[RMDB]
RNA sequence: GGGAACGACUCGAGUAGAGUCGAAAAGAUAUGGAAUUAAUGGAGCUCGAAGAGCGAUGAGUCGGAAACGACGAGCUCUAAGAGCGAUGAAAUUAAUUCCUAAGUCAAACGUCAGUUCGCUGACGAAUCCUUUUGUUUUGUUCGCAAAACAAAAGGAAAAAGAAACAACAACAACAAC
Reactivity to DMS in 0.01 (KOAc 150mM, MgCl2 10mM, bicine 150mM(pH8.5), 24C), signal-to-noise 2, nucleotides 027 to 126: g010a020u000a290u000g000g010a020a000u000u000a010a000u000g030g000a040g010c000u030c000g000a300a030g010a000g020c000g020a140u000g000a250g030u000c010g010g010a040a040a110c000g020a020c000g000a130g000c000u000c000u000a030a300g000a010g010c010g000a030u010g000a110a100a000u000u000a010a000u000u000c000c000u010a040a130g000u000c030a070a150a160c010g000u000c000a000g000u000u020c250g020c000u000g000a010c000g000a070a150
Reactivity to 2A3 in 0.01 (KOAc 150mM, MgCl2 10mM, bicine 150mM(pH8.5), 24C), signal-to-noise 1, nucleotides 027 to 126: g030a000u040a040u140g030g010a010a010u030u010a020a000u020g040g000a000g000c010u010c030g060a050a050g040a030g000c090g110a170u230g090a100g050u000c000g010g000a040a050a070c030g000a000c000g000a050g000c000u000c000u010a030a000g000a000g000c010g000a000u010g000a000a010a000u000u010a010a010u030u000c000c020u000a060a050g040u000c040a170a070a040c010g000u000c000a020g020u060u220c300g010c160u000g000a010c010g000a000a090
Structure probing data (DMS and 2A3) for a 177-nucleotide construct.
The 2A3 profile rests on 2,352 reads.